An RNA of 177 nucleotides, treated with DMS and 2A3 and read out base by base. Conditions: 150 mM KOAc, 10 mM MgCl2 and 150 mM bicine (pH 8.5), 24 C. The data come from the RNA Mapping Database (RMDB), library OK2TST. The 2A3 profile rests on 14,264 reads. For DMS the reverse transcriptase was MarathonRT. Reactivities are rounded to 0.1 and cut off at 0 and 3.

[RMDB]
RNA sequence: GGGAACGACUCGAGUAGAGUCGAAAAUUCACUACCAUUUGUGGUGGAGUCACACAUCAGAGUUUGGAUGAUGUUCUAACAGAUACUGAGAGGAAUUUAACAAUCUCUUUUGAUUUGGAGUCACACACUCUGAAUAGUAUUUCGAUACUAUUCAGAGAAAAGAAACAACAACAACAAC
Reactivity to DMS in 0.01 (KOAc 150mM, MgCl2 10mM, bicine 150mM(pH8.5), 24C), signal-to-noise 9, nucleotides 027 to 126: u010u000c050a080c050u000a120c030c190a160u000u010u010g030u000g010g020u010g000g010a060g010u000c080a080c130a080c040a020u010c020a030g000a090g010u000u000u000g010g010a160u000g010a050u000g000u000u000c030u000a100a170c050a040g010a110u010a080c090u010g000a060g010a090g010g010a040a030u000u000u010a080a200c140a050a040u000c010u000c020u000u000u000u000g010a090u000u000u000g010g010a100g000u010c060a060c090a070c220a120
Reactivity to 2A3 in 0.01 (KOAc 150mM, MgCl2 10mM, bicine 150mM(pH8.5), 24C), signal-to-noise 9, nucleotides 027 to 126: u040u010c020a010c050u070a060c020c050a210u060u100u300g060u040g040g110u030g010g030a040g060u060c020a030c000a010c000a090u020c020a010g040a040g090u050u120u120g100g010a090u100g010a040u050g070u060u030c020u030a060a050c010a030g070a170u150a230c030u070g020a040g010a020g110g080a070a040u100u100u090a090a030c020a020a050u000c010u020c000u040u040u060u050g100a120u040u040u100g080g010a040g070u070c030a010c000a000c000a010